Source: RMDB library OK2TST, as collected in RNAgym. An RNA of 177 nucleotides, treated with 2A3 and DMS and read out base by base. The RNA was probed in 150 mM KOAc, 10 mM MgCl2 and 150 mM bicine (pH 8.5) at 24 C. Values cover nucleotides 27 to 126. For DMS, 3,055 sequencing reads were counted.
[RMDB]
RNA sequence: GGGAACGACUCGAGUAGAGUCGAAAAACAAAUAUCUUGAGGAGGUCAGCCAUGCUCGUCCGUCUACUGUUCGGUUGCGCAUUGGGCAUCGCCGCCGCGACGGCGCUUGCGCAGCCGUUGCCGCCGACUGAAAAUGGAGUUUCGACUCCAUUUUCAGAAAAGAAACAACAACAACAAC
Reactivity to 2A3 in 0.01 (KOAc 150mM, MgCl2 10mM, bicine 150mM(pH8.5), 24C), signal-to-noise 2, nucleotides 027 to 126: a030c040a000a090a000u170a050u080c070u080u130g040a080g020g020a000g060g000u040c050a020g030c040c020a060u110g010c020u030c030g070u030c030c010g110u060c050u120a150c030u060g050u080u060c000g000g020u020u040g020c020g000c030a050u090u220g060g050g020c040a050u070c010g000c020c040g090c080c070g120c040g060a110c050g040g010c020g060c060u000u040g000c000g010c000a000g000c000c020g010u010u030g000c020c010g000c000c010g120a090
Reactivity to DMS in 0.01 (KOAc 150mM, MgCl2 10mM, bicine 150mM(pH8.5), 24C), signal-to-noise 3, nucleotides 027 to 126: a060c090a090a090a070u010a080u000c060u000u000g010a110g010g010a090g030g010u000c050a090g000c060c060a080u000g010c030u010c070g000u000c020c010g000u000c030u000a100c100u000g000u000u010c040g010g000u010u010g000c010g010c040a060u000u010g020g000g000c030a120u010c030g020c020c090g010c090c160g000c100g010a030c040g010g010c000g010c060u010u000g000c050g010c010a040g020c030c010g000u000u000g010c020c040g010c040c060g000a200